[RMDB]
RNA sequence: GGGAACGACUCGAGUAGAGUCGAAAAGACUUCACCAAAGAUCAUCUUAUAAGCUUCACAUUGAGGGUCCACCGCCCUUGGAGAUUGUGUAGCCACUAUUCCAUUAUACGGACAUCCUCCUCAGCAGCCGACCUAGCUGGUUCGCCAGCUAGGUCGGAAAAGAAACAACAACAACAAC
Reactivity to 2A3 in 0.01 (KOAc 150mM, MgCl2 10mM, bicine 150mM(pH8.5), 24C), signal-to-noise 2, nucleotides 027 to 126: g040a040c100u060u010c030a120c020c030a000a090a000g060a050u110c040a040u030c120u130u250a020u020a100a080g030c030u010u010c040a020c000a100u000u060g010a000g000g000g000u070c150c120a130c090c070g000c000c030c000u050u020g060g030a050g050a110u160u030g070u030g030u030a010g000c000c040a040c000u070a030u070u000c040c020a080u140u060a040u110a130c060g050g010a020c030a110u030c010c010u040c000c000u060c000a010g070c000a020g000
This 177-nucleotide RNA was probed chemically with 2A3. For 2A3 the reverse transcriptase was SuperScript II with manganese. The RNA was probed in 150 mM KOAc, 10 mM MgCl2 and 150 mM bicine (pH 8.5) at 24 C.